Notes:
An RNA of 177 nucleotides, treated with DMS and 2A3 and read out base by base. It was measured as part of the RMDB library OK1LIB.

[RMDB]
RNA sequence: GGGAACGACUCGAGUAGAGUCGAAAAGUGGUCGAGUCCGAAGGACUGGGGUAGCGAAAUAAAGAGAGAGAGAGCUACCCCGUCAGUCAGUCACUCUCUGUCUGACUCUCUCUCUCAAAGACCACAACAUUAAAUCGACUUUCGAGUCGAUUUAAUGAAAAGAAACAACAACAACAAC
Reactivity to DMS in 0.01 (KOAc 150mM, MgCl2 10mM, bicine 150mM(pH8.5), 24C), signal-to-noise 5, nucleotides 027 to 126: g010u010g000g020u010c000g000a110g000u000c020c020g010a150a100g020g000a080c040u010g020g000g000g010u010a000g010c020g010a070a120a100u060a060a110a080g000a020g000a010g000a010g000a030g000a060g000c030u010a010c000c000c000c000g020u000c000a010g010u000c010a010g000u030c280a130c200u010c190u030c000u010g000u010c010u000g000a020c000u010c020u000c000u000c000u000c000u000c010a070a080a150g000a000c000c010a010c010a110a250
Reactivity to 2A3 in 0.01 (KOAc 150mM, MgCl2 10mM, bicine 150mM(pH8.5), 24C), signal-to-noise 9, nucleotides 027 to 126: g020u010g010g010u020c010g030a030g040u030c040c050g120a150a110g070g020a010c040u050g000g000g000g000u000a010g020c040g140a150a080a050u240a060a180a010g020a000g000a000g000a000g000a000g000a000g000c000u010a010c000c010c000c000g000u010c000a000g000u000c000a000g020u030c060a070c140u130c030u000c010u030g000u010c000u000g010a020c000u000c000u000c000u000c000u000c000u000c020a030a070a010g010a000c000c000a010c010a020a010